Chemical mapping of a 207-nucleotide RNA with 2A3. It was measured as part of the RMDB library OK3TST. For 2A3, 394 sequencing reads were counted.
[RMDB]
RNA sequence: GGGAACGACUCGAGUAGAGUCGAAAAGGAGAGAACCAUUAAUACUGGUGAUACAGUAGCCAUAGUUAAACUCUUGAGGUAAUCAUCGUGGUAGAUAUUAAAGGUCUUACCGAAAGAGAAUGGAAGGGAAUCGAUAAACAAGUGGCCCAAUUAAUGCGUGCACAAUCAGCUUCGGCUGAUUGUGCACAAAAGAAACAACAACAACAAC
Reactivity to 2A3 in 0.01 (KOAc 150mM, MgCl2 10mM, bicine 150mM(pH8.5), 24C), signal-to-noise 1, nucleotides 027 to 156: g040g000a020g030a000g000a040a030c020c020a070u070u090a000a070u000a020c020u030g060g000u000g080a010u100a100c040a070g050u090a040g000c070c020a080u000a010g080u100u190a200a080a020c020u000c000u000u040g000a010g000g000u020a010a010u030c050a030u050c090g080u030g050g090u120a060g100a140u070a010u100u300a070a070a000g050g000u040c030u000u000a010c000c000g000a030a030a030g030a000g000a010a010u140g010g060a000a020g000g090g020a030a080u150c050g050a050u160a180a000a010c040a240a040g000u050g000g060c080c000c000a020a000u030u170a120a140u170g060c050
The RNA was probed in 150 mM KOAc, 10 mM MgCl2 and 150 mM bicine (pH 8.5) at 24 C.